[RMDB]
RNA sequence: GGGAACGACUCGAGUAGAGUCGAAAACAGUCUGCCCAGUAGCUGCUCCUGGAUCCCAGUCUCCCCAGUUGCUGGCAUCUGGACAUACAAGCCCCCAGGGCUGCGGCCCCACUCCAGUUGCUGGUACUGGUUUACUCGAAUUCGUUCGAGUAAACCAAAAAGAAACAACAACAACAAC
Reactivity to DMS in 0.01 (KOAc 150mM, MgCl2 10mM, bicine 150mM(pH8.5), 24C), signal-to-noise 2, nucleotides 027 to 126: c100a120g030u000c030u010g000c040c030c070a160g030u000a110g050c020u010g000c050u000c010c040u000g010g000a130u000c020c040c020a120g030u000c040u010c030c020c010c010a050g010u010u000g040c000u000g040g010c030a020u000c020u000g000g000a040c150a170u020a120c180a130a100g010c030c010c020c030c110a140g080g010g000c010u000g040c180g040g000c040c010c010c080a110c160u010c000c000a030g000u000u000g000c000u000g000g020u010a020c160
The record gives the reactivity of an RNA of 177 nucleotides to DMS.
Values cover nucleotides 27 to 126.
DMS (dimethyl sulfate) methylates the pairing face of unpaired adenines and cytosines.
The DMS profile rests on 1,161 reads.
Conditions: 150 mM KOAc, 10 mM MgCl2 and 150 mM bicine (pH 8.5), 24 C.